[RMDB]
RNA sequence: GGGAACGACUCGAGUAGAGUCGAAAAGGCGCCUACUAUCGCGAUGCCCACGGCGAAGGGCUGGUCCCCGGCGUGCCGGUGGCGACCGUGGUGGACACCGUGGGCGCCGGCGACGGCUUCGCGGUCAGGGCAUAUUAAUAUUCGUAUUAAUAUGCCCAAAAGAAACAACAACAACAAC
Reactivity to 2A3 in 0.01 (KOAc 150mM, MgCl2 10mM, bicine 150mM(pH8.5), 24C), signal-to-noise 9, nucleotides 027 to 126: g060g010c030g060c040c020u110a140c060u080a090u110c030g000c010g040a030u090g020c000c010c020a030c040g060g000c030g050a110a080g110g110g050c050u080g160g040u040c030c030c000c000g010g000c020g010u050g200c010c000g010g010u010g030g020c080g060a040c020c010g090u130g090g130u150g050g020a030c010a000c030c010g010u180g000g040g010c000g000c010c010g010g010c000g000a020c010g010g010c010u030u030c010g000c030g030g020u060c080a080
Reactivity to DMS in 0.01 (KOAc 150mM, MgCl2 10mM, bicine 150mM(pH8.5), 24C), signal-to-noise 9, nucleotides 027 to 126: g010g000c070g010c040c030u000a120c150u010a060u010c050g020c020g010a080u000g000c010c000c050a110c040g000g010c010g010a130a110g010g010g010c020u000g010g010u010c020c100c000c010g000g010c030g030u000g000c020c000g010g010u000g000g010c030g000a040c020c060g020u010g030g030u000g010g010a120c070a030c010c010g020u010g010g010g010c010g010c000c000g000g010c290g000a050c030g010g000c020u000u000c020g010c010g000g010u000c250a130